[RMDB]
The record gives the reactivity of an RNA of 177 nucleotides to DMS. The DMS profile rests on 1,132 reads. For DMS the reverse transcriptase was MarathonRT.

RNA sequence: GGGAACGACUCGAGUAGAGUCGAAAACGGCGGAGGAGCUCCCUCCCCGUCCUUCCCUUUUCUUAUUAUUCCGAGGAUGUUUCCCAGCCAGGGAUUUUCAUCCUCGAGUUUCUUGAUGGUUCUCCUGGAUAGGUAUCAUCUUCGGAUGAUACCUAUCAAAAGAAACAACAACAACAAC
Reactivity to DMS in 0.01 (KOAc 150mM, MgCl2 10mM, bicine 150mM(pH8.5), 24C), signal-to-noise 2, nucleotides 027 to 126: c030g030g050c230g010g000a020g000g020a240g000c250u010c070c010c000u000c000c000c000c000g000u000c040c050u010u000c000c000c000u020u010u020u000c090u000u030a060u020u020a160u000u020c150c000g000a010g000g000a020u000g020u000u000u000c000c000c000a220g030c240c300a160g000g020g000a000u010u010u000u020c000a020u010c000c000u000c000g000a050g000u000u000u010c050u020u000g000a090u020g000g000u000u000c080u010c030c070u010g020